This 177-nucleotide RNA was probed chemically with DMS.

RNA sequence: GGGAACGACUCGAGUAGAGUCGAAAAGGAUUUAGCGCUUACUAAAGAUUUGGUCACAGGAUUUUACAGUGAACCCGAGAAUAGUAAUUUACCACUCACCGACACCGCUACUGCUCUUGUGAUUAUACAUCUAAAGCGCGUUCGCGCGCUUUAGAUGAAAAGAAACAACAACAACAAC
Reactivity to DMS in 0.01 (KOAc 150mM, MgCl2 10mM, bicine 150mM(pH8.5), 24C), signal-to-noise 1, nucleotides 027 to 126: g020g020a190u000u000u000a020g000c040g000c120u000u000a010c070u000a010a090a030g010a180u000u000u000g000g010u000c050a010c010a070g010g000a120u040u010u000u000a100c100a060g010u000g040a080a110c010c020c010g010a080g010a140a050u000a020g020u000a050a080u000u030u000a080c050c050a060c100u020c090a050c030c010g010a080c090a100c030c060g020c090u000a070c060u000g010c090u000c060u000u010g010u000g000a080u010u000a040u000a180

The reactions ran in a buffer of 150 mM KOAc, 10 mM MgCl2 and 150 mM bicine (pH 8.5), at 24 C. Reactivities are given for positions 27 through 126.